[RMDB]
RNA sequence: GGGAACGACUCGAGUAGAGUCGAAAAAAGGGUACUGUUCACAGACUAAAUGAUGACGGGUUGUAAAUGCGGACGAGCAUUUGCAGCUCAAGAUAUAGUCGGGCUCGUUCUAGGGCGAGAGAUGAUGAUAUGCCUUUCGCAUGUGAUUCACCGUUCCGAACAACAGAAACUUCGGUUUCUGUUGUUCAAAAGAAACAACAACAACAAC
Reactivity to 2A3 in 0.01 (KOAc 150mM, MgCl2 10mM, bicine 150mM(pH8.5), 24C), signal-to-noise 2, nucleotides 027 to 156: a010a000g160g000g010u110a120c080u050g030u100u110c040a020c010a080g040a010c030u110a060a080a100u170g060a040u100g050a010c100g000g000g000u000u000g000u000a000a000a000u010g000c030g030g110a080c110g090a120g030c010a000u000u000u000g000c000a010g000c000u000c000a000a030g000a010u110a020u020a070g040u000c000g020g020g000c030u020c020g020u050u000c080u060a030g000g050g030c030g000a020g000a000g010a070u120g000a010u050g020a010u040a010u180g070c020c000u080u170u090c050g000c030a030u050g030u040g080a070u070u040c040a030c110c030g040u080u030c020c040
Reactivity to DMS in 0.01 (KOAc 150mM, MgCl2 10mM, bicine 150mM(pH8.5), 24C), signal-to-noise 1, nucleotides 027 to 156: a070a020g000g020g040u010a030c040u000g010u010u010c100a140c000a200g000a070c030u010a030a080a150u020g020a090u000g040a160c130g050g000g060u030u000g010u000a020a000a010u010g040c010g000g020a190c280g000a140g020c000a070u000u000u000g020c000a030g000c020u010c000a010a080g010a100u000a150u010a050g000u000c010g020g020g000c070u000c050g040u000u010c090u020a120g010g000g030c030g000a010g020a070g000a060u010g000a060u020g000a210u000a000u010g020c010c140u000u000u000c060g030c120a020u010g020u010g000a300u000u020c000a070c020c030g000u000u010c010c030

Structure probing data (2A3 and DMS) for a 207-nucleotide construct. For 2A3 the reverse transcriptase was SuperScript II with manganese. The reactions ran in a buffer of 150 mM KOAc, 10 mM MgCl2 and 150 mM bicine (pH 8.5), at 24 C.